[RMDB]
RNA sequence: GGGAACGACUCGAGUAGAGUCGAAAAAAAUGGCGCAACAUCAUUUAUAGCCUUUUGUUGCAGAAUUGAUGACUUCAUAAGUGAAAUGUCAUGACUCAGUUCUUUCAAAUAACGUUCAUAUGAAAGGAAGCAUUGCUCAAUUCGUUGAGCAAUGCUUAAAAGAAACAACAACAACAAC
Reactivity to DMS in 0.01 (KOAc 150mM, MgCl2 10mM, bicine 150mM(pH8.5), 24C), signal-to-noise 2, nucleotides 027 to 126: a070a020a000u000g010g000c210g000c050a020a040c050a030u000c040a020u000u010u000a170u000a210g020c030c070u000u000u010u000g000u000u010g010c070a170g000a020a030u000u000g030a050u000g000a020c010u000u000c050a000u020a140a110g020u000g000a020a010a080u010g020u010c010a010u000g010a110c140u000c010a050g010u000u000c000u010u000u020c070a040a070a090u000a020a070c120g010u000u000c100a100u000a090u010g000a040a070a070g020g000
Reactivity to 2A3 in 0.01 (KOAc 150mM, MgCl2 10mM, bicine 150mM(pH8.5), 24C), signal-to-noise 1, nucleotides 027 to 126: a000a000a040u020g070g000c010g000c020a020a030c020a080u000c030a030u110u070u050a140u170a150g020c000c000u040u070u070u040g010u000u040g000c030a000g090a090a000u090u120g000a020u070g000a060c010u050u030c060a060u020a200a060g040u030g120a050a000a050u150g020u000c000a030u100g020a070c010u050c120a000g010u000u000c020u060u070u050c100a100a130a080u130a180a040c030g010u000u030c060a030u070a050u230g090a100a030a000g100g000
Conditions: 150 mM KOAc, 10 mM MgCl2 and 150 mM bicine (pH 8.5), 24 C. An RNA of 177 nucleotides, treated with DMS and 2A3 and read out base by base. For 2A3, 668 sequencing reads were counted. The DMS profile rests on 1,195 reads.